[RMDB]
RNA sequence: GGGAACGACUCGAGUAGAGUCGAAAAGUUGCCGACGAACCUUCCAACCUUCCAAACGUCGUUUUCGACAACCUUCCAACCUACCAAUCUACUCGAGAGGAGGAGGAGGAGGAGGAGGAGGAAUUAAUGAAUACGUUCUAUUCGUAGAACGUAUUCAAAAAGAAACAACAACAACAAC
Reactivity to 2A3 in 0.01 (KOAc 150mM, MgCl2 10mM, bicine 150mM(pH8.5), 24C), signal-to-noise 4, nucleotides 027 to 126: g080u080u080g170c030c010g030a060c030g020a040a070c000c010u050u020c030c030a090a070c070c040u130u050c000c000a090a120a080c060g010u000c000g010u040u020u040u110c010g010a020c010a070a040c020c020u110u020c030c060a110a100c040c010u140a190c040c000a030a080u000c000u040a060c030u050c070g010a020g000a030g020g030a050g030g030a030g000g040a040g010g080a070g000g080a050g010g050a030g020g060a020g030g060a040a060u160u120a160a100
Reactivity to DMS in 0.01 (KOAc 150mM, MgCl2 10mM, bicine 150mM(pH8.5), 24C), signal-to-noise 4, nucleotides 027 to 126: g010u010u010g010c060c020g030a100c120g030a110a120c040c020u000u000c020c010a110a140c040c030u000u020c030c060a040a080a150c150g010u010c010g020u000u000u000u010c040g000a050c020a110a140c050c020u000u010c010c010a100a080c040c040u000a110c070c050a070a270u000c010u000a040c080u000c030g000a030g000a250g010g000a090g000g000a150g010g000a070g050g000a160g020g010a110g010g000a110g010g010a110g010g000a240a070u010u010a030a140

Chemical mapping of a 177-nucleotide RNA with 2A3 and DMS.